This 177-nucleotide RNA was probed chemically with 2A3 and DMS.
RNA sequence: GGGAACGACUCGAGUAGAGUCGAAAAGGAUUAGAUAGAUAUCCCUUCAACAUAGGUCAUCGAAAGGAUCUCGGAGACCCACCAAAGUACGAAAGCCAGGAUCUUUCAGAAAACGGAUUCCUAUUCAAAGUUAAGUACGAUUCGUCGUACUUAACUUAAAAGAAACAACAACAACAAC
Reactivity to 2A3 in 0.01 (KOAc 150mM, MgCl2 10mM, bicine 150mM(pH8.5), 24C), signal-to-noise 9, nucleotides 027 to 126: g090g010a060u130u170a080g080a170u100a070g070a040u120a120u080c010c020c000u070u060c070a150a130c050a090u200a070g050g030u060c040a050u050c110g040a070a020a030g060g020a050u030c040u020c070g050g000a050g030a070c020c030c010a040c000c030a100a070a050g040u060a040c060g070a090a030a010g050c050c050a060g080g050a080u030c000u010u030u040c030a030g130a030a080a020a020c050g030g030a050u070u070c010c010u060a110u090u160c080a120
Reactivity to DMS in 0.01 (KOAc 150mM, MgCl2 10mM, bicine 150mM(pH8.5), 24C), signal-to-noise 7, nucleotides 027 to 126: g010g000a060u030u010a110g010a170u040a100g000a080u010a040u010c020c000c030u000u000c120a080a070c150a120u030a090g000g000u010c080a050u020c080g000a080a080a090g010g000a040u000c030u010c040g010g000a080g010a080c060c000c060a090c100c050a060a040a080g010u010a090c110g010a030a060a030g020c090c070a080g010g010a060u020c010u000u020u000c030a040g020a050a050a060a060c130g000g000a140u010u000c010c010u010a050u020u030c080a100

The RNA was probed in 150 mM KOAc, 10 mM MgCl2 and 150 mM bicine (pH 8.5) at 24 C.
Reactivities are given for positions 27 through 126.
For 2A3 the reverse transcriptase was SuperScript II with manganese.
The 2A3 profile rests on 13,466 reads.